The record gives the reactivity of an RNA of 177 nucleotides to DMS. Reactivities are given for positions 27 through 126.
RNA sequence: GGGAACGACUCGAGUAGAGUCGAAAAAAAUAUUCAGGUAGCAUGACGGAAGCUAUGAAUUAAUCCUGGUGGAGGGGUGUGUUCAGUUUGAGGGAGGAUGAUAAAAUGGAACGGAGAUUGCAAGGAGCUGACAAAUCUAGUUCGCUAGAUUUGUCAGAAAAGAAACAACAACAACAAC
Reactivity to DMS in 0.01 (KOAc 150mM, MgCl2 10mM, bicine 150mM(pH8.5), 24C), signal-to-noise 1, nucleotides 027 to 126: a000a070a080u000a010u000u000c040a040g020g020u010a000g030c030a030u000g030a060c110g020g010a110a080g010c020u000a030u000g010a020a040u010u000a080a100u000c040c020u000g010g040u020g030g000a100g010g020g000g010u000g000u010g020u000u000c060a040g030u010u010u020g010a090g010g010g010a050g020g000a070u020g010a050u000a040a060a060a090u000g020g030a070a100c110g010g010a050g000a060u000u000g020c080a040a070g020g010a120g030
DMS adducts were read by reverse transcription with MarathonRT.
The data come from the RNA Mapping Database (RMDB), library RFMREP.